RNA sequence: GGGAACGACUCGAGUAGAGUCGAAAAUCAGAUUCGUCUGACAAGGUACCUUUGUGAUGAUUGAUUUCGUUCCAACAGCGCUCAUACUCCCAUUGGGAGUGGGAGCGACAUGGUUCUUUCCUUUCAUCACUCUGGUCAUGCUAGCCUUCGGGCUAAACUAUAAAUUCAACUUCGGUUGAAUUUAUAGAAAAGAAACAACAACAACAAC
Reactivity to DMS in 0.01 (KOAc 150mM, MgCl2 10mM, bicine 150mM(pH8.5), 24C), signal-to-noise 4, nucleotides 027 to 156: u000c010a020g020a070u000u010c250g020u000c000u010g020a040c030a080a110g010g010u000a020c000c010u000u000u000g000u010g010a020u010g010a030u000u000g010a070u000u000u000c140g010u000u000c020c020a050a130c090a180g010c010g010c010u000c000a070u000a030c010u000c000c000c020a300u010u000g060g040g010a020g040u000g010g000g020a020g030c000g010a020c080a300u000g000g030u000u000c020u000u000u000c080c030u000u000u000c020a020u000c020a020c010u000c060u000g020g000u000c050a110u000g010c050u000a060g020c000c000u000u000c290g060g010g020c000u000a010a070a160
Reactivity to 2A3 in 0.01 (KOAc 150mM, MgCl2 10mM, bicine 150mM(pH8.5), 24C), signal-to-noise 9, nucleotides 027 to 156: u030c010a010g030a050u050u150c170g050u000c100u030g020a040c070a080a100g160g040u150a030c000c000u020u020u010g000u000g000a000u000g000a000u000u010g020a050u040u090u190c180g010u020u000c020c000a040a040c090a130g050c000g000c000u000c000a010u010a030c000u010c000c020c090a300u230u300g000g000g000a000g000u000g000g030g010a000g000c000g020a010c010a040u030g010g000u010u000c000u030u050u030c020c000u010u020u020c000a000u000c000a000c000u000c010u000g010g000u020c020a060u180g050c050u040a010g000c010c000u030u110c280g080g000g000c010u020a060a010a010
This 207-nucleotide RNA was probed chemically with DMS and 2A3.
The data come from the RNA Mapping Database (RMDB), library RNAMAK.
The reactions ran in a buffer of 150 mM KOAc, 10 mM MgCl2 and 150 mM bicine (pH 8.5), at 24 C.
For 2A3, 18,926 sequencing reads were counted.
For 2A3 the reverse transcriptase was SuperScript II with manganese.